Structure probing data (2A3) for a 177-nucleotide construct. It was measured as part of the RMDB library OK1LIB.
RNA sequence: GGGAACGACUCGAGUAGAGUCGAAAACUGUAUCUGUGCAAGGCAUAACUAUACUCAUUGGCCGACUUCGGAUUGGGUUAUUAUUGUACAACCCCGCCAAGCUCUGUUCUCGAACGGGUAACAUCCAGCCGCAAGAGAAGUUCGCUUCUCUUGCGGCAAAAGAAACAACAACAACAAC
Reactivity to 2A3 in 0.01 (KOAc 150mM, MgCl2 10mM, bicine 150mM(pH8.5), 24C), signal-to-noise 1, nucleotides 027 to 126: c000u000g040u100a140u020c000u060g000u000g030c000a070a050g000g020c020a020u060a210a000c010u190a040u150a220c030u060c140a000u000u100g070g000c040c000g030a080c110u080u050c040g140g000a070u000u090g030g000g070u000u000a030u100u060a040u100u190g040u040a000c020a050a040c010c000c000c010g050c000c000a020a010g000c000u020c070u040g020u120u040c000u000c070g000a100a000c040g040g030g000u030a030a030c020a090u000c000c000a010
For 2A3, 552 sequencing reads were counted.